[RMDB]
RNA sequence: GGGAACGACUCGAGUAGAGUCGAAAAACCGGCUCAUCUCGGCAAGAGGCGGCAGUCCUCAGUACUCUUACUCUUUCCUAUAAAGAGGAGACUGCUGGACUCGCCGCCCGAGCCCGAGCAUGGGCCCAUACGGAAAUCUUCGGAUUUCCGAAAAGAAACAACAACAACAAC
Reactivity to DMS in 0.01 (KOAc 150mM, MgCl2 10mM, bicine 150mM(pH8.5), 24C), signal-to-noise 6, nucleotides 027 to 129: a090c040c030g000g060c010u020c010a000u000c020u000c010g000g000c010a190a090g000a050g050g040c010g020g000c030a030g020u000c030c000u040c020a000g040u060a220c060u020c020u060u120a300c000u050c020u030u050u000c160c100u140a140u140a190a000a000g000a000g020g010a010g010a020c010u030g050c150u030g030g000a020c000u050c110g030c000c020g000c070c000c010g050a070g000c100c020c010g000a000g060c110a010u000g000g000g010c270c000c020a050u130a000
Reactivity to 2A3 in 0.01 (KOAc 150mM, MgCl2 10mM, bicine 150mM(pH8.5), 24C), signal-to-noise 9, nucleotides 027 to 129: a000c010c000g000g000c000u000c000a000u000c000u000c000g000g010c020a050a040g080a190g040g000c000g000g000c000a000g000u000c000c000u010c000a010g000u130a300c020u000c020u070u140a240c010u030c000u020u090u050c060c100u190a170u250a300a030a000g000a000g000g020a000g000a000c000u000g050c080u010g000g010a000c000u020c070g000c000c000g000c000c000c000g000a000g000c000c010c000g000a000g010c030a010u000g000g000g000c000c000c000a100u180a040